[RMDB]
RNA sequence: GGGAACGACUCGAGUAGAGUCGAAAAUCCGGGAAAUAGACGAAAGACUUCCGGGCAAAAGAGAGGCACGUGAAUGGCCGUUCAUUCGGAACCUCCAUUUCCGGAUAGCGUUUCUUCGCCUGGUCAACUGUCCGUUCCAGUUCGCUGGAACGGACAGAAAAGAAACAACAACAACAAC
Reactivity to 2A3 in 0.01 (KOAc 150mM, MgCl2 10mM, bicine 150mM(pH8.5), 24C), signal-to-noise 1, nucleotides 027 to 126: u140c050c000g000g010g010a190a250a050u280a170g020a000c050g250a160a120a080g060a040c010u040u000c020c050g000g000g060c060a000a000a080a000g000a060g000a000g000g000c000a030c100g050u160g000a000a040u030g000g030c110c000g000u000u130c000a000u110u090c150g200g000a090a090c000c040u000c040c000a040u070u090u100c000c000g000g000a050u100a020g020c150g000u000u000u000c000u040u000c000g090c000c040u070g000g020u130c040a010a020
Chemical mapping of a 177-nucleotide RNA with 2A3. Reactivities are given for positions 27 through 126.